[RMDB]
RNA sequence: GGGAACGACUCGAGUAGAGUCGAAAAACGGCCAGGAAGAGAAAUCGAAUGAGACGCCGUUAGUAAUGGCGAAUGAACGCGGCACAGUCCAAACCGAAGCCUUCGGGCAAUGUGGUGUUCGGACUGAUCUCUCCAAAUUGUUCGCAAUUUGGAGAGAAAAAGAAACAACAACAACAAC
Reactivity to 2A3 in 0.01 (KOAc 150mM, MgCl2 10mM, bicine 150mM(pH8.5), 24C), signal-to-noise 4, nucleotides 027 to 126: a010c020g090g010c030c010a040g060g060a100a030g060a010g080a080a100a050u130c050g040a070a070u210g040a050g040a090c090g000c010c000g010u000u000a010g010u010a000a040u040g120g030c190g080a040a000u020g010a000a000c000g040c000g000g000c020a010c000a050g000u000c000c000a050a000a020c030c000g030a010a020g050c010c000u050u060c130g040g000g000c010a020a060u160g050u180g060g000u020g130u080u060c070g000g000a000c000u000g010a010
Reactivity to DMS in 0.01 (KOAc 150mM, MgCl2 10mM, bicine 150mM(pH8.5), 24C), signal-to-noise 3, nucleotides 027 to 126: a080c070g010g000c040c000a030g020g020a110a050g000a050g000a050a090a060u020c050g000a140a090u000g000a090g000a090c180g010c010c000g010u000u000a070g040u000a060a030u010g000g020c270g000a130a030u000g020a140a090c130g020c010g000g000c010a220c080a060g000u000c010c010a060a110a030c010c020g000a130a180g020c000c000u000u010c140g000g000g030c000a020a010u010g040u020g040g010u000g040u000u020c160g010g010a070c000u000g000a090